[RMDB]
An RNA of 177 nucleotides, treated with DMS and read out base by base. Source: RMDB library OK2TST, as collected in RNAgym. For DMS, 760 sequencing reads were counted. For DMS the reverse transcriptase was MarathonRT. Conditions: 150 mM KOAc, 10 mM MgCl2 and 150 mM bicine (pH 8.5), 24 C.

RNA sequence: GGGAACGACUCGAGUAGAGUCGAAAAAACUACAGGUGAAGCACUUCCUCAAGCAGUUUUGAAGGGCCAUACUGCUGAAGGUUUUGGUCUUUGCUGGAACCCGAAUUUACCUGGAAAUCUAGCAACAUCGUCACUGAGGAUUCGUCCUCAGUGACGAAAAAGAAACAACAACAACAAC
Reactivity to DMS in 0.01 (KOAc 150mM, MgCl2 10mM, bicine 150mM(pH8.5), 24C), signal-to-noise 1, nucleotides 027 to 126: a040a080c090u000a050c020a010g010g000u000g000a020a070g010c140a080c080u010u000c010c010u000c090a220a050g000c010a020g010u000u000u010u020g000a200a090g010g000g000c150c010a050u010a050c000u000g010c000u000g010a170a090g010g020u000u000u000u000g000g000u000c080u000u000u000g000c020u000g010g000a050a020c010c010c140g010a060a050u000u000u000a040c040c000u000g010g000a060a020a020u000c010u010a040g020c020a030a130c300a120